RNA sequence: GGGAACGACUCGAGUAGAGUCGAAAAACGUAGUUCGCUACGUCUAACCCGUAGGAGCCUGACAGCUAUGAAGCCACAAAAGUCUAUAUUCGAAAGAGUAUAGUCGCUGUGGUGGAGCUGUCAGGCUCCUAAACGGAUCACCACGCUUCGGCGUGAAGCCCUUUACUCAUUUCGAUGAGUAAAGGGCAAAAGAAACAACAACAACAAC
Reactivity to DMS in 0.01 (KOAc 150mM, MgCl2 10mM, bicine 150mM(pH8.5), 24C), signal-to-noise 1, nucleotides 027 to 156: a020c000g010u000a010g020u000u010c270g020c000u000a010c000g000u010c030u030a170a130c010c010c030g010u030a000g000g000a000g040c000c000u010g040a010c000a020g010c000u060a180u000g010a140a300g000c000c000a070c010a000a140a120a110g010u000c020u000a010u000a000u000u000c000g010a230a100a200g000a010g010u000a020u000a010g020u000c000g010c200u010g010u000g000g010u000g000g030a010g020c010u010g020u000c010a010g000g010c000u010c010c010u000a030a020a020c030g010g030a120u020c040a220c080c010a030c000g020c020u000u040c300g070g000c010g000u000g000a140a150
The data come from the RNA Mapping Database (RMDB), library RNAMAK.
Chemical mapping of a 207-nucleotide RNA with DMS.
Values are in units of 0.01, from 0 to 300, in steps of 10.